[RMDB]
RNA sequence: GGGAACGACUCGAGUAGAGUCGAAAAGAUAUGGAUUAUGACAUGAUUGGUGAUCGGAAACGAUCAGAAGAUCAACAGCAUACUGUCCUAAGUCAAAGGCACUUAAACGUUCGCGUUUAAGUGCCAAGAAAAUAGAUGUGUUCGCACAUCUAUUUUCAAAAGAAACAACAACAACAAC
Reactivity to 2A3 in 0.01 (KOAc 150mM, MgCl2 10mM, bicine 150mM(pH8.5), 24C), signal-to-noise 7, nucleotides 027 to 126: g050a020u080a100u140g030g020a040u080u080a040u150g080a060c080a090u090g030a050u040u070g080g150u050g060a000u010c000g010g020a070a060a040c020g000a010u020c000a000g070a040a020g010a010u030c020a050a300c040a080g040c000a010u030a080c070u150g030u050c010c000u060a210a020g070u050c070a100a080a160g000g010c000a000c000u000u000a010a000a000c010g060u050u090c300g030c010g140u000u010u000a000a000g000u000g000c000c000a000a000
Reactivity to DMS in 0.01 (KOAc 150mM, MgCl2 10mM, bicine 150mM(pH8.5), 24C), signal-to-noise 8, nucleotides 027 to 126: g000a090u000a240u000g010g000a050u010u000a020u000g000a100c080a210u000g000a010u000u000g000g010u000g020a010u000c010g000g000a120a070a180c020g030a010u010c000a010g000a240a280g000a000u000c000a020a080c240a120g000c010a000u010a020c300u000g010u000c000c010u000a080a110g020u000c080a060a080a170g000g020c000a010c000u000u000a000a000a000c000g010u000u010c260g010c010g010u000u000u000a000a000g010u000g000c000c000a000a010